Chemical mapping of a 207-nucleotide RNA with DMS and 2A3. The data come from the RNA Mapping Database (RMDB), library M2RFPK.
RNA sequence: GGGAACGACUCGAGUAGAGUCGAAAAAACUCUUUAAGGCAAUAACGAACUAAUUCUAAGCAAGUAAUGGAGAAAUGCCAGGGUCACUAUCUAGCCAUAAUAGUGCUUGACAGUAUGAUACAAACUGAAUAUGGUAAACCGUUCGCGGUUUACCAAACAACUAAUGGCUGUUCGCAGCCAUUAGUUGAAAAGAAACAACAACAACAAC
Reactivity to DMS in 0.01 (KOAc 150mM, MgCl2 10mM, bicine 150mM(pH8.5), 24C), signal-to-noise 1, nucleotides 027 to 156: a060a040c060u020c010u020u010u010a060a050g060g000c010a020a000u000a070a160c050g000a080a110c050u000a110a110u010u010c040u000a130a140g000c050a020a120g020u000a040a090u020g020g020a170g000a040a020a040u000g000c030c000a060g000g020g010u010c060a050c050u000a040u010c060u000a100g000c040c070a130u010a130a100u010a070g040u000g050c050u000u010g000a070c010a040g010u000a070u000g010a110u000a050c050a060a070a030c090u010g000a000a120u010a120u010g010g000u000a020a000a000c000c000g030u020u000c290g040c030g010g020u000u020u000a010c000c010a020a020a050
Reactivity to 2A3 in 0.01 (KOAc 150mM, MgCl2 10mM, bicine 150mM(pH8.5), 24C), signal-to-noise 2, nucleotides 027 to 156: a000a000c150u180c080u170u160u060a140a010g020g000c040a080a040u090a210a010c020g040a030a020c020u060a070a140u140u040c020u050a000a110g060c060a070a080g010u130a100a000u140g090g000a030g030a070a110a000u030g000c020c040a030g030g000g000u040c030a010c000u030a030u090c010u030a000g000c000c000a070u090a230a060u030a190g040u080g030c010u000u000g060a000c010a040g030u040a060u120g080a040u030a150c100a050a160a010c000u050g030a030a050u060a070u140g000g000u000a000a000a000c000c000g080u040u040c180g020c020g080g000u000u000u000a000c000c010a020a000a000
The RNA was probed in 150 mM KOAc, 10 mM MgCl2 and 150 mM bicine (pH 8.5) at 24 C. The 2A3 profile rests on 836 reads.